The record gives the reactivity of an RNA of 177 nucleotides to 2A3 and DMS. For 2A3 the reverse transcriptase was SuperScript II with manganese. For DMS the reverse transcriptase was MarathonRT.

[RMDB]
RNA sequence: GGGAACGACUCGAGUAGAGUCGAAAAGAAUGGAAAGGGAUUGUAGAGAUCAGUGUCGCAAGGCCGGGCUUCUGCAUUCUCAAUUAGAUUGUAUAUGGUUACGUGCGACAGAUACUGGUGCGAAGAAGGGUUAUAUAUACUUCGGUAUAUAUAACCCAAAAGAAACAACAACAACAAC
Reactivity to 2A3 in 0.01 (KOAc 150mM, MgCl2 10mM, bicine 150mM(pH8.5), 24C), signal-to-noise 4, nucleotides 027 to 126: g040a010a030u160g010g060a050a060a100g040g020g000a060u050u050g020u080a030g020a010g010a060u050c060a030g040u000g040u110c000g010c050a010a070g080g000c010c010g010g030g000c010u090u000c030u050g000c010a020u050u000c030u020c020a030a140u180u110a020g050a080u040u080g030u100a090u030a040u220g060g020u060u100a060c040g030u060g040c020g020a020c020a050g030a010u060a040c000u020g000g000u040g070c020g040a050a020g050a100a050
Reactivity to DMS in 0.01 (KOAc 150mM, MgCl2 10mM, bicine 150mM(pH8.5), 24C), signal-to-noise 4, nucleotides 027 to 126: g010a090a040u020g010g000a030a080a090g000g000g000a110u030u000g030u000a090g010a090g010a030u000c040a050g020u020g030u000c020g010c130a090a140g000g020c050c020g010g000g010c040u000u000c120u010g010c070a030u010u000c030u000c220a080a100u030u020a070g010a060u000u000g010u010a030u020a100u020g000g010u000u020a080c090g020u020g000c030g000a040c040a090g020a100u020a030c040u000g020g010u010g000c100g020a050a090g010a110a120